[RMDB]
Structure probing data (2A3 and DMS) for a 177-nucleotide construct.
RNA sequence: GGGAACGACUCGAGUAGAGUCGAAAACGGCGGUGCGUGGAUGGACAGGUCGAGACGUCGCGAGCACUUCUGGUGGGGGUUUGGAUGGGAGAAUCUCGGUGCCAGAUAGCUGGGAGGUCCGAUACGGCGAUAAAAAUAGUUUCGACUAUUUUUAUCGAAAAGAAACAACAACAACAAC
Reactivity to 2A3 in 0.01 (KOAc 150mM, MgCl2 10mM, bicine 150mM(pH8.5), 24C), signal-to-noise 6, nucleotides 027 to 126: c020g020g000c020g030g030u060g020c040g040u050g050g040a070u060g030g020a010c020a020g010g030u050c030g030a010g000a010c010g030u030c010g000c030g020a020g000c030a020c030u060u030c020u050g020g010u060g010g010g000g000g000u020u070u070g040g010a050u050g030g010g010a050g020a020a020u020c010u010c020g040g010u020g010c000c000a020g010a050u070a020g020c020u010g000g000g010a030g000g010u000c000c000g000a030u040a060c040g030g000
Reactivity to DMS in 0.01 (KOAc 150mM, MgCl2 10mM, bicine 150mM(pH8.5), 24C), signal-to-noise 8, nucleotides 027 to 126: c090g010g010c060g010g010u000g010c040g010u010g000g000a080u010g000g000a060c100a080g010g010u010c060g000a080g000a080c090g000u000c050g010c080g010a080g000c050a100c100u000u010c040u010g000g010u000g010g010g000g000g000u000u010u010g010g010a100u020g010g000g000a110g010a060a050u010c030u010c030g000g010u010g000c000c030a050g000a060u020a070g010c030u000g000g010g010a080g000g000u010c020c010g000a100u020a070c100g000g000